RNA sequence: GGGAACGACUCGAGUAGAGUCGAAAAACGAGUCCUACGCGACUCGAAUGGUAUUGUCGGCGUAAAAGAACAAGACGUCACCGGACGCGACCGGGCUAAAAAGCGAAACGUCAUCUACGGAUGACGAAAAACGGACCUGGGUUCGCCCAGGUCCGAACAGAUAUACUAGGUUCGCCUAGUAUAUCUGAAAAGAAACAACAACAACAAC
Reactivity to DMS in 0.01 (KOAc 150mM, MgCl2 10mM, bicine 150mM(pH8.5), 24C), signal-to-noise 2, nucleotides 027 to 156: a130c020g010a050g000u010c010c000u010a160c130g030c070g040a050c000u000c000g010a050a080u000g020g010u010a040u000u010g010u000c020g010g030c030g070u000a060a100a070a130g010a120a140c120a160a090g000a060c040g020u000c020a120c040c010g010g020a140c060g020c070g000a070c040c010g000g030g000c080u020a010a030a030a040a050g000c040g000a080a110a160c020g010u000c010a020u000c000u000a150c300g020g010a040u000g000a010c000g010a000a040a060a100a120c010g020g010a020c000c000u040g010g010g030u010u000c260g050c040c000c010a000g000g000u000c000c000g010a010a090
Reactivity to 2A3 in 0.01 (KOAc 150mM, MgCl2 10mM, bicine 150mM(pH8.5), 24C), signal-to-noise 6, nucleotides 027 to 156: a000c010g000a000g010u010c040c080u220a130c130g030c240g010a000c010u000c000g000a030a070u090g050g060u170a120u120u160g110u110c060g010g010c030g010u060a050a080a080a110g090a110a060c110a150a020g110a030c000g000u020c010a010c010c000g010g010a020c010g000c010g020a000c010c000g000g020g000c030u040a020a000a000a000a020g010c010g050a090a010a010c010g000u000c000a000u000c010u020a020c170g110g000a000u000g000a000c000g010a050a010a000a000a000c000g000g000a000c000c000u000g010g010g030u050u050c140g100c010c010c000a000g000g000u000c000c000g000a000a000